This 170-nucleotide RNA was probed chemically with DMS and 2A3.
RNA sequence: GGGAACGACUCGAGUAGAGUCGAAAAGGGAGAACACUUCGAGAGUUGGGGGAUAGAAAGAGGGCGAAUUUCCUCGGGAGGAUCCCCCAAGCUUCCAACAGGCAAGCAACAAGAUAGAGGAGCCCCCACACCACUAGCUUCGGCUAGUGGAAAAGAAACAACAACAACAAC
Reactivity to DMS in 0.01 (KOAc 150mM, MgCl2 10mM, bicine 150mM(pH8.5), 24C), signal-to-noise 5, nucleotides 027 to 129: g010g020g010a030g000a040a020c040a050c030u000u000c060g030a130g030a060g040u010u020g020g010g000g010g000a010u030a000g030a050a180a090g030a050g000g030g040c240g040a070a070u010u020u020c050c010u030c030g000g010g000a160g040g010a000u010c010c020c020c020c010a000a000g020c040u020u030c000c040a130a110c090a090g020g040c080a020a030g030c110a080a060c120a050a060g000a050u000a050g000a100g060g010a040g040c000c000c000c050c000a150c240a000
Reactivity to 2A3 in 0.01 (KOAc 150mM, MgCl2 10mM, bicine 150mM(pH8.5), 24C), signal-to-noise 5, nucleotides 027 to 129: g030g010g010a050g000a080a010c070a030c100u050u060c090g040a050g000a010g080u070u070g000g000g000g000g000a020u030a040g060a010a050a010g030a000g000g010g000c080g090a060a060u070u090u090c000c000u020c000g000g010g000a040g040g020a030u020c000c000c010c000c000a010a000g010c010u060u030c010c000a010a030c000a040g030g000c030a020a040g030c000a020a060c000a020a050g040a080u120a040g030a040g010g000a000g000c010c000c000c000c010a030c020a010

DMS adducts were read by reverse transcription with MarathonRT. High 2A3 reactivity points to a flexible backbone, as in loops and unpaired stretches. It was measured as part of the RMDB library 15KLIB.